[RMDB]
RNA sequence: GGGAACGACUCGAGUAGAGUCGAAAAACGUCCUACUGCUACGGCAGUAGGACGACUCGGACUGGUUCGAAAACUUCCCAGAAUAAAAAACUAAGUGACUACACCGACGCUUACGAGCGUCGGUGAAGUCACGGGCAUUGUUCGCAAUGCCCGUGACAAAAGAAACAACAACAACAAC
Reactivity to DMS in 0.01 (KOAc 150mM, MgCl2 10mM, bicine 150mM(pH8.5), 24C), signal-to-noise 2, nucleotides 027 to 126: a030c020g000u000c000c000u000a010c000u000g000c020u000a120c170g040g010c020a000g020u000a010g030g030a000c020g030a000c080u000c010g010g000a020c000u000g000g000u000u000c000g010a030a020a130a300c300u000u000c030c000c000a220g000a060a100u060a010a010a080a060a070a110c140u040a100a100g020u000g000a060c050u000a120c070a010c020c000g000a000c000g070c030u000u020a070c180g040a080g000c000g060u000c030g020g060u000g010a000a010
Reactivity to 2A3 in 0.01 (KOAc 150mM, MgCl2 10mM, bicine 150mM(pH8.5), 24C), signal-to-noise 3, nucleotides 027 to 126: a010c000g000u000c000c000u000a000c000u010g020c010u010a050c220g130g000c010a000g000u000a000g010g000a000c000g010a000c030u010c010g020g040a020c010u060g100g050u100u010c000g020a000a000a060a080c010u000u010c000c020c010a020g140a100a090u230a010a060a020a000a020a010c150u160a200a060g110u040g080a080c040u050a040c090a000c000c010g020a010c000g070c020u080u050a060c210g090a030g010c000g000u000c000g020g010u000g010a010a010